[RMDB]
RNA sequence: GGGAACGACUCGAGUAGAGUCGAAAAUUGAGGAGCAGUACUGUCCCCACAGCCUUAGUGUGGCUGACCAGCUGCCAAGUAGCAGUGUCGACCCAAACCACGGGGGUAUGGCUGUAGUUUUCGGUUUUUACGGUGCCGGCAACGGUGACGGUGGCAAAAUCAGCGUAUGAUUCGUCAUACGCUGAUUAAAAGAAACAACAACAACAAC
Reactivity to DMS in 0.01 (KOAc 150mM, MgCl2 10mM, bicine 150mM(pH8.5), 24C), signal-to-noise 2, nucleotides 027 to 156: u000u020g000a150g020g010a090g020c030a090g000u000a090c050u010g000u020c000c020c000c040a140c050a060g000c030c040u010u010a120g040u000g050u000g050g040c020u000g050a030c020c060a190g030c030u010g010c010c030a050a170g010u000a070g020c000a020g040u010g010u000c030g020a110c000c030c020a090a150a120c040c050a130c110g000g010g050g040g040u000a030u020g010g000c020u000g030u000a000g020u010u000u000u020c020g000g020u000u000u000u000u000a040c000g010g020u000g030c040c030g000g000c110a040a080c040g030g020u000g000a050c050g010g040u020g020g000c080a030a070
Reactivity to 2A3 in 0.01 (KOAc 150mM, MgCl2 10mM, bicine 150mM(pH8.5), 24C), signal-to-noise 2, nucleotides 027 to 156: u160u070g020a050g060g020a080g020c040a050g040u040a090c010u050g070u090c050c010c050c010a040c020a010g050c020c000u080u140a100g030u100g060u120g170g000c020u030g020a070c020c030a040g000c000u020g000c020c010a170a120g070u250a020g100c050a020g000u090g030u100c080g140a210c000c010c010a040a130a040c050c030a060c140g010g000g000g020g040u060a090u060g050g000c000u020g030u120a100g050u060u020u000u100c000g000g010u040u000u000u010u110a050c070g010g000u020g020c030c020g000g010c010a080a020c040g040g010u020g020a030c050g010g010u050g000g000c020a000a120

The data come from the RNA Mapping Database (RMDB), library OK3TST. This 207-nucleotide RNA was probed chemically with DMS and 2A3. The 2A3 profile rests on 1,141 reads. Reactivities are given for positions 27 through 156. 2A3 adducts were read by reverse transcription with SuperScript II with manganese. The DMS profile rests on 3,924 reads.